Description
The record gives the reactivity of an RNA of 177 nucleotides to 2A3 and DMS. DMS (dimethyl sulfate) methylates the pairing face of unpaired adenines and cytosines. For 2A3 the reverse transcriptase was SuperScript II with manganese. For 2A3, 11,505 sequencing reads were counted. Values cover nucleotides 27 to 126. The reactions ran in a buffer of 150 mM KOAc, 10 mM MgCl2 and 150 mM bicine (pH 8.5), at 24 C.
[RMDB]
RNA sequence: GGGAACGACUCGAGUAGAGUCGAAAAGAUAUGGAGACACGGUUAGGGAGCUGACUCGGAAACGAGCAGCGAGGAUCUAAUUGUCUCCUAAGUCAAACGUUGUCCCCAGUUCGCUGGGGACAACGAACAAUAUACUGCUCUUCGGAGCAGUAUAUUGAAAAGAAACAACAACAACAAC
Reactivity to 2A3 in 0.01 (KOAc 150mM, MgCl2 10mM, bicine 150mM(pH8.5), 24C), signal-to-noise 4, nucleotides 027 to 126: g010a020u110a030u160g030g000a000g010a010c080a040c210g180g000u020u030a020g010g030g040a010g000c000u040g280a300c010u010c000g010g000a040a070a030c000g000a010g000c000a000g000c020g010a040g000g000a010u010c000u010a000a040u080u050g000u000c000u020c000c010u000a100a010g060u020c050a130a050a110c020g000u000u000g000u000c000c000c000c000a000g010u060u100c220g030c150u020g000g010g020g000a000c010a010a000c000g000a000a000
Reactivity to DMS in 0.01 (KOAc 150mM, MgCl2 10mM, bicine 150mM(pH8.5), 24C), signal-to-noise 8, nucleotides 027 to 126: g010a030u000a300u000g000g010a010g000a020c020a050c300g010g000u000u000a010g000g000g010a080g020c000u000g000a160c010u000c000g010g000a090a080a170c000g010a000g010c010a010g010c000g010a050g010g010a040u010c000u000a000a020u000u000g000u000c000u000c000c000u000a010a080g000u000c020a100a100a250c020g010u000u000g010u000c000c000c000c000a020g010u000u010c230g010c010u000g000g000g000g000a000c000a000a000c000g010a030a090